The record gives the reactivity of an RNA of 177 nucleotides to 2A3 and DMS. For DMS the reverse transcriptase was MarathonRT. Conditions: 150 mM KOAc, 10 mM MgCl2 and 150 mM bicine (pH 8.5), 24 C. Source: RMDB library OK2TST, as collected in RNAgym. In probing experiments dimethyl sulfate is read out at A N1 and C N3, which are open when not base-paired.
RNA sequence: GGGAACGACUCGAGUAGAGUCGAAAACUUGCAAACAGGCAGAAUAGGUGGCGUUAAAAAUUCGUUUACGACAACAAGGACGAAGAAAUCACGUAGUCUAUAGACUAGUACUUGCUGACGUUGAGUCUCGCCUAAAAACUUUCGAGUUUUUAGGCGAAAAAGAAACAACAACAACAAC
Reactivity to 2A3 in 0.01 (KOAc 150mM, MgCl2 10mM, bicine 150mM(pH8.5), 24C), signal-to-noise 1, nucleotides 027 to 126: c000u000u110g050c000a020a230a180c040a070g080g000c000a010g100a090a060u000a040g060g050u010g070g000c010g000u010u030a050a050a020a050a040u020u010c010g000u000u020u100a150c130g050a050c030a150a000c000a070a200g090g000a010c000g010a010a100g050a050a100a030u110c010a020c030g020u030a010g000u010c000u030a120u040a060g040a020c040u070a010g020u040a050c020u040u010g020c020u060g010a060c030g020u000u050g000a000g050u020c010
Reactivity to DMS in 0.01 (KOAc 150mM, MgCl2 10mM, bicine 150mM(pH8.5), 24C), signal-to-noise 2, nucleotides 027 to 126: c040u010u000g030c080a080a120a080c140a040g010g040c010a060g020a070a060u010a050g000g030u000g000g030c060g000u000u000a030a090a040a080a140u000u010c050g020u000u000u000a150c170g030a120c170a060a050c140a040a100g000g000a020c000g000a050a040g010a090a100a100u020c130a030c070g030u010a030g010u000c000u000a080u010a130g000a020c030u010a090g020u000a070c080u000u000g000c040u010g010a060c090g020u000u030g000a130g000u000c100